[RMDB]
RNA sequence: GGGAACGACUCGAGUAGAGUCGAAAAAAGGGCAUGUUGCCAGACACGUAUCUGAACGGAACUCAUGUUUGGACCUCUUCCAAAAACGUCCAGUACGAAUUCAUGGGAUUGCUUUUUACCAUCAACAUCGACACGCUGUGCCUGGAUCUGCAUCACGACUCUAAAUAUUUUUCGAAAUAUUUAGAGUAAAAGAAACAACAACAACAAC
Reactivity to 2A3 in 0.01 (KOAc 150mM, MgCl2 10mM, bicine 150mM(pH8.5), 24C), signal-to-noise 8, nucleotides 027 to 156: a000a000g070g000g000c060a060u100g060u120u110g200c020c010a000g020a000c050a010c020g010u030a060u160c030u040g060a070a010c020g040g090a090a050c060u090c150a080u160g070u060u040u030g020g010a040c020c070u090c080u180u060c040c000a040a010a010a020a020c030g000u000c010c000a010g000u030a010c020g040a090a130u100u100c050a070u100g000g000g040a040u020u070g030c000u050u060u030u070u090a070c020c010a050u100c040a010a100c010a090u100c040g070a030c020a010c120g030c050u050g020u030g040c000c020u010g010g020a060u050c020u060g000c020a020u040c060a020c080g080
Reactivity to DMS in 0.01 (KOAc 150mM, MgCl2 10mM, bicine 150mM(pH8.5), 24C), signal-to-noise 3, nucleotides 027 to 156: a060a050g000g020g040c020a090u000g010u000u000g040c010c020a120g020a110c060a160c030g010u000a040u010c020u010g010a050a070c010g000g020a070a120c110u010c090a120u010g010u000u020u000g030g010a050c100c120u010c080u010u000c030c050a030a050a040a110a100c040g010u000c010c010a040g020u000a070c040g020a080a110u000u000c040a110u000g010g000g010a100u000u000g010c040u010u000u010u000u010a130c050c030a080u000c050a040a070c040a070u000c020g010a080c040a040c050g010c080u000g010u000g010c010c000u000g020g000a080u010c050u000g020c030a100u000c050a060c040g010